[RMDB]
An RNA of 177 nucleotides, treated with DMS and 2A3 and read out base by base.
RNA sequence: GGGAACGACUCGAGUAGAGUCGAAAAUGCUCAGGAUGAGGCUAUAAUACAGAGGGCAGAGGGGCUCCGUAGUGCUUGCUUUGCAGUGUUGGUCCCAUGGUGUCGGUAGCUCUCACAGCAGGGGCCACCUUACGCCAAGAUUCGUCUUGGCGUAAGGAAAAGAAACAACAACAACAAC
Reactivity to DMS in 0.01 (KOAc 150mM, MgCl2 10mM, bicine 150mM(pH8.5), 24C), signal-to-noise 3, nucleotides 027 to 126: u010g010c030u000c030a110g010g000a090u010g010a080g010g000c040u000a030u010a090a060u010a090c160a090g000a120g000g010g020c060a070g000a100g000g010g000g020c010u010c040c070g010u010a050g020u000g020c080u000u000g000c070u010u000u000g020c070a070g020u000g020u000u010g010g010u000c010c000c010a070u010g010g000u000g000u000c120g040g000u000a100g010c090u010c020u000c060a060c050a050g010c050a070g000g000g000g000c070c020a070
Reactivity to 2A3 in 0.01 (KOAc 150mM, MgCl2 10mM, bicine 150mM(pH8.5), 24C), signal-to-noise 2, nucleotides 027 to 126: u060g000c010u030c020a050g050g050a090u050g040a000g030g000c010u060a040u040a300a150u180a080c050a040g090a100g020g020g000c010a030g020a060g100g020g020g000c030u000c030c030g060u100a050g030u020g060c020u070u100g040c000u110u080u110g020c050a040g000u050g030u160u110g030g010u000c020c010c000a060u050g060g000u020g010u040c060g000g040u020a040g010c020u030c010u030c070a040c010a030g100c010a010g000g000g000g000c000c000a000
The 2A3 profile rests on 2,014 reads.